Chemical mapping of a 177-nucleotide RNA with 2A3 and DMS.
It was measured as part of the RMDB library TTRDEL.

RNA sequence: GGGAACGACUCGAGUAGAGUCGAAAAGAUAUGGACCCACUAACCGAACUACUCUGUAUGGUCGGAAACGACCAUAGAGAGCGUCGUGGGUCCUAAGUCAAAAGAGUCCAGGUUCGCCUGGACUCAACAUGUUCUUAACGUUCGCGUUAAGAACAUGAAAAGAAACAACAACAACAAC
Reactivity to 2A3 in 0.01 (KOAc 150mM, MgCl2 10mM, bicine 150mM(pH8.5), 24C), signal-to-noise 5, nucleotides 027 to 126: g010a000u040a010u080g000g000a000c000c020c000a000c030u050a070a070c090c050g090a120a140c100u290a110c020u280c010u020g150u280a010u000g010g010u000c000g000g000a010a020a010c010g000a000c000c000a000u000a000g000a000g020a000g070c030g020u030c010g010u000g010g020g000u000c000c000u010a010a000g010u000c010a000a000a040a200g000a000g000u000c000c000a010g040g020u040u090c260g110c030c000u000g000g000a000c000u000c000a000a000
Reactivity to DMS in 0.01 (KOAc 150mM, MgCl2 10mM, bicine 150mM(pH8.5), 24C), signal-to-noise 6, nucleotides 027 to 126: g010a020u010a280u000g010g000a010c010c000c010a020c020u010a150a110c210c070g000a090a080c150u010a300c040u000c000u000g000u000a010u000g000g010u000c000g020g000a040a040a120c000g000a020c000c000a010u000a010g000a010g010a010g000c260g010u010c250g000u000g000g000g010u000c000c000u010a000a070g010u000c020a070a070a100a120g000a020g010u000c000c000a010g010g010u000u010c250g020c000c000u000g000g010a000c000u000c000a020a110
The reactions ran in a buffer of 150 mM KOAc, 10 mM MgCl2 and 150 mM bicine (pH 8.5), at 24 C.